[RMDB]
RNA sequence: GGGAACGACUCGAGUAGAGUCGAAAAACAGAUAUCUCAAGUGAGUGUGCACAACUUCAUUCACUACAGGUACUGAUGCCUCACUCAACCUAUGGUGAAAUCAGUUGUGUGAAGUUGUGCACAUAACUGCAAUCAUUAUAGUGAGUGUUCGGGCUGACGACUCAAGUAUGUUCGCAUACUUGAGUCGAAAAGAAACAACAACAACAAC
Reactivity to DMS in 0.01 (KOAc 150mM, MgCl2 10mM, bicine 150mM(pH8.5), 24C), signal-to-noise 1, nucleotides 027 to 156: a050c030a090g000a140u000a060u010c010u000c040a200a130g020u000g010a090g050u000g030u000g000c040a090c040a020a060c010u000u000c020a070u000u000c000a010c040u000a090c030a020g040g020u020a110c050u020g000a060u000g010c070c070u000c000a020c080u000c070a060a090c120c020u000a030u000g020g000u010g010a020a100a140u000c080a200g010u000u010g000u010g070u000g000a050a000g020u000u000g000u010g010c010a000c000a020u000a020a050c050u000g030c030a140a190u000c030a020u010u000a070u000a060g060u000g000a040g020u010g000u000u020c000g000g000g030c020u000g030a150
Reactivity to 2A3 in 0.01 (KOAc 150mM, MgCl2 10mM, bicine 150mM(pH8.5), 24C), signal-to-noise 2, nucleotides 027 to 156: a000c090a010g090a050u060a110u040c040u020c060a030a020g000u010g040a090g070u000g000u000g020c000a010c020a010a010c000u000u010c000a020u040u030c010a020c050u120a090c060a030g140g030u060a010c010u010g010a040u040g030c000c000u010c000a010c000u070c010a040a070c040c040u040a080u150g000g000u000g000a020a000a000u010c020a010g000u010u010g000u000g010u000g020a000a000g000u000u010g010u010g000c000a000c000a000u000a000a000c000u010g000c040a000a020u040c020a020u010u190a060u050a180g060u030g030a050g000u040g030u020u020c050g000g050g000c060u030g050a020